[RMDB]
This 207-nucleotide RNA was probed chemically with DMS and 2A3. Conditions: 150 mM KOAc, 10 mM MgCl2 and 150 mM bicine (pH 8.5), 24 C. For 2A3, 1,486 sequencing reads were counted. The data come from the RNA Mapping Database (RMDB), library OK3TST. Reactivities are rounded to 0.1 and cut off at 0 and 3.

RNA sequence: GGGAACGACUCGAGUAGAGUCGAAAAAGCGAGGUGGUCAACAUUCUGGCGCGGCAGACACCAUCGAGAAGGUGUUUUUUAGGAGAAGAGCCAAUAACACUAACACAGCCGUGGAUGCCGUUGUGUACGCGGAGGAAGUGGGCCUUCAGGCCCCGGACCAACAUGUCGAUUUCGAUCGACAUGUUGGAAAAGAAACAACAACAACAAC
Reactivity to DMS in 0.01 (KOAc 150mM, MgCl2 10mM, bicine 150mM(pH8.5), 24C), signal-to-noise 1, nucleotides 027 to 156: a110g010c060g000a140g000g040u030g000g000u000c060a030a020c030a020u000u000c050u040g000g030c080g000c000g030g020c070a090g030a110c010a050c030c000a060u020c060g000a200g040a190a290g000g000u000g000u000u000u000u000u000u000a140g000g010a100g050a180a130g000a140g000c000c030a020a110u000a090a070c020a080c050u000a060a120c050a100c020a050g010c010c030g000u000g050g000a090u000g000c020c020g020u010u000g020u000g040u000a030c060g010c000g020g010a090g020g000a020a150g000u000g000g020g000c000c030u010u000c150a180g060g000c010c010c010c000g000g010a190
Reactivity to 2A3 in 0.01 (KOAc 150mM, MgCl2 10mM, bicine 150mM(pH8.5), 24C), signal-to-noise 3, nucleotides 027 to 156: a000g100c060g000a020g020g020u030g010g020u080c050a030a050c040a140u120u030c040u080g020g000c000g040c030g020g010c020a000g020a020c020a020c040c000a080u150c120g060a080g020a150a050g020g000u030g000u000u020u000u000u020u060a090g000g010a040g020a120a000g030a060g050c000c000a040a030u150a050a020c040a000c070u060a080a010c050a010c030a070g030c020c030g070u040g000g040a060u070g000c000c000g040u020u050g060u020g000u050a020c020g000c060g020g040a040g020g010a040a050g040u240g030g010g010c000c040u230u260c080a090g020g000c000c030c000c000g020g010a010